[RMDB]
RNA sequence: GGGAACGACUCGAGUAGAGUCGAAAAACCCGGUAGGUCCCGCCGGGGGUGUGCACCCAGGGCAGCAUGCGCAGGAGCCAACGCGAGGUGAUGCCCUGCAUCUGCGGAGCGGACUUGGUCGUGGUUGCAUGGGAAGGAUGUUCGCAUCCUUCCCAUGAAAAGAAACAACAACAACAAC
Reactivity to DMS in 0.01 (KOAc 150mM, MgCl2 10mM, bicine 150mM(pH8.5), 24C), signal-to-noise 2, nucleotides 027 to 126: a100c000c000c000g000g030u020a060g000g000u000c020c010c030g000c020c020g000g030g000g040g030u010g000u030g000c030a110c120c240c010a040g020g000g010c010a020g010c030a020u000g000c020g000c000a070g010g000a200g050c080c190a090a110c160g010c010g010a100g000g000u020g000a080u000g000c010c010c010u000g000c020a030u000c020u000g000c000g000g000a060g020c070g000g000a060c010u000u010g020g010u010c020g030u000g000g000u030u000g020
Reactivity to 2A3 in 0.01 (KOAc 150mM, MgCl2 10mM, bicine 150mM(pH8.5), 24C), signal-to-noise 2, nucleotides 027 to 126: a000c000c000c000g000g040u050a050g000g010u000c010c010c020g030c010c000g060g000g000g020g020u050g040u080g070c050a050c050c040c020a000g000g020g000c010a010g010c010a010u160g010c020g020c040a100g000g130a100g110c060c060a070a070c050g010c040g060a080g090g060u030g010a040u030g000c000c000c000u000g010c000a040u000c000u090g100c000g010g030a030g000c070g020g000a030c030u020u020g050g000u020c020g000u020g040g040u040u060g040